The record gives the reactivity of an RNA of 177 nucleotides to 2A3 and DMS. For 2A3 the reverse transcriptase was SuperScript II with manganese. The reactions ran in a buffer of 150 mM KOAc, 10 mM MgCl2 and 150 mM bicine (pH 8.5), at 24 C. The 2A3 profile rests on 692 reads.
[RMDB]
RNA sequence: GGGAACGACUCGAGUAGAGUCGAAAAAUCAUACGAAUACAGUCAUGUUCUUUCUAGUUCGUGAUAGGAGACCAUAUGGUACGCCACAGGAUUUUGGUCAGGUGUUCAACAUGUAUGAUAACGAGCCCCUGACGUCCGGAUUCGUCCGGACGUCAGGAAAAGAAACAACAACAACAAC
Reactivity to 2A3 in 0.01 (KOAc 150mM, MgCl2 10mM, bicine 150mM(pH8.5), 24C), signal-to-noise 2, nucleotides 027 to 126: a000u010c000a010u040a000c050g090a020a000u040a030c000a020g000u000c000a000u000g040u000u000c000u070u250u020c090u160a040g000u000u000c000g080u020g020a000u070a100g200g160a220g020a090c000c000a030u020a080u190g090g000u090a060c040g000c050c000a040c050a070g100g070a200u040u160u100u130g000g000u000c010a040g000g100u000g000u000u070c060a130a070c070a120u300g020u000a000u010g030a000u070a030a090c080g030a000g090c030c000
Reactivity to DMS in 0.01 (KOAc 150mM, MgCl2 10mM, bicine 150mM(pH8.5), 24C), signal-to-noise 1, nucleotides 027 to 126: a030u020c000a000u000a010c000g000a000a050u000a000c020a300g000u000c000a000u000g000u010u000c000u000u000u000c300u100a100g000u000u000c010g010u000g000a000u050a190g050g000a270g000a000c030c000a000u000a110u000g000g000u020a000c140g000c000c080a030c180a100g050g000a250u000u000u000u000g010g020u000c000a090g000g060u020g020u000u000c010a120a110c030a100u010g020u000a000u000g090a010u000a080a110c140g010a230g000c060c110
The DMS profile rests on 876 reads.